This 177-nucleotide RNA was probed chemically with 2A3 and DMS. Values cover nucleotides 27 to 126. The reactions ran in a buffer of 150 mM KOAc, 10 mM MgCl2 and 150 mM bicine (pH 8.5), at 24 C. DMS adducts were read by reverse transcription with MarathonRT.
[RMDB]
RNA sequence: GGGAACGACUCGAGUAGAGUCGAAAAAGCCUGAUUACGAUCAGGCAAGCUUUAACAUGGGGGUACCUGCUACGUAAUAAAAAGUAAGUGCUUCCAUGUUUCAGUGGAGCUGCGUUACGACGCAGCAGACAAGAUCCGAUUUCGAUCGGAUCUUGUCAAAAGAAACAACAACAACAAC
Reactivity to 2A3 in 0.01 (KOAc 150mM, MgCl2 10mM, bicine 150mM(pH8.5), 24C), signal-to-noise 7, nucleotides 027 to 126: a000g020c000c000u000g000a000u040u070a050c270g060a030u000c000a020g000g000c010a000a020g000c000u030u000u010a000a000c000a000u000g000g000g000g020g010u010a000c000c010u010g050c020u030a050c130g210u150a130a130u150a170a270a060a040a010g030u040a070a010g000u000g000c000u000u000c000c010a000u000g000u000u000u000c000a000g000u050g050g090a070g000c000u000g000c010g010u020u040a120c270g000a000c000g030c000a000g000c000a010
Reactivity to DMS in 0.01 (KOAc 150mM, MgCl2 10mM, bicine 150mM(pH8.5), 24C), signal-to-noise 3, nucleotides 027 to 126: a110g010c000c000u010g000a000u000u030a130c190g000a040u000c000a020g000g030c010a020a020g000c030u010u010u000a000a010c030a020u010g000g030g000g000g000u000a000c020c030u020g000c000u000a060c190g020u010a140a090u040a050a080a090a130a020g000u000a000a020g000u010g000c000u000u000c010c000a010u000g010u000u000u000c020a010g050u000g010g020a150g010c000u010g000c000g000u000u000a150c170g040a140c000g010c000a030g000c000a020